[RMDB]
An RNA of 177 nucleotides, treated with DMS and 2A3 and read out base by base.
For 2A3, 17,037 sequencing reads were counted.
For DMS the reverse transcriptase was MarathonRT.
It was measured as part of the RMDB library TTRDEL.
RNA sequence: GGGAACGACUCGAGUAGAGUCGAAAAGAUAUGGAUGGAGGAGUGUACUGCACGUAUAUCGGAAACGAUAUAUUCAGGUACAUACUCCGUUGAAAUCCUAAGUCAAACGCCGACUUCGGUCGGCGAACACUAUAUUAAUCUUCGGAUUAAUAUAGUGAAAAGAAACAACAACAACAAC
Reactivity to DMS in 0.01 (KOAc 150mM, MgCl2 10mM, bicine 150mM(pH8.5), 24C), signal-to-noise 8, nucleotides 027 to 126: g010a050u000a300u000g010g000a010u000g000g010a050g020g010a070g020u000g000u000a000c000u000g010c250a190c300g000u000a000u010a010u000c000g010g010a130a080a160c000g010a010u000a000u000a000u000u000c280a170g000g000u000a010c010a060u000a160c010u000c000c000g000u000u010g000a090a110a030u000c000c000u010a050a120g010u000c060a080a110a270c030g010c010c000g000a020c000u000u010c180g020g000u000c010g020g010c010g010a020a090
Reactivity to 2A3 in 0.01 (KOAc 150mM, MgCl2 10mM, bicine 150mM(pH8.5), 24C), signal-to-noise 5, nucleotides 027 to 126: g030a020u110a020u200g040g010a010u020g010g040a020g030g020a090g030u000g010u010a020c020u030g040c140a030c110g010u010a010u000a000u010c010g010g020a050a080a020c010g000a000u010a000u000a000u040u080c060a040g020g020u010a000c010a000u060a020c010u010c000c000g000u030u010g010a020a030a010u010c010c000u030a170a010g070u040c040a120a060a100c050g000c030c000g000a020c010u040u080c300g130g000u000c000g000g010c010g010a000a000